An RNA of 207 nucleotides, treated with 2A3 and read out base by base. It was measured as part of the RMDB library RNAMAK.
RNA sequence: GGGAACGACUCGAGUAGAGUCGAAAACCUUGCUCUUCGGAGCAAGGAAAAAAGAUAUGGAACAGUCAAGCUUUUGACGGCUCGACGUCGGAAACGACGUUCGAGCCGAUAAGCUUGUCUGUUCCUAAGUCAAAAAAUGGACGAUUCGUCGUCCAAACUCUGAAUCUGAAUUCGUUCAGAUUCAGAGAAAAGAAACAACAACAACAAC
Reactivity to 2A3 in 0.01 (KOAc 150mM, MgCl2 10mM, bicine 150mM(pH8.5), 24C), signal-to-noise 2, nucleotides 027 to 156: c000c000u000u000g010c000u000c000u060u090c300g110g010a010g000c010a020a010g000g020a010a090a000a000a000a000g010a020u060a030u090g000g010a000a000c000a000g000u020c000a010a010g000c030u070u110u190u230g170a110c040g000g000c010u000c000g020a000c010g000u000c000g060g040a080a030a040c000g000a010c000g110u220u110c010g040a000g000c010c000g020a010u010a000a000g000c000u000u000g000u000c000u010g010u000u000c010c010u000a000a000g000u000c010a010a030a060a030a010a160u110g000g000a000c000g000a010u020u090c190g030u000c000g010u000c000c020a010a010a020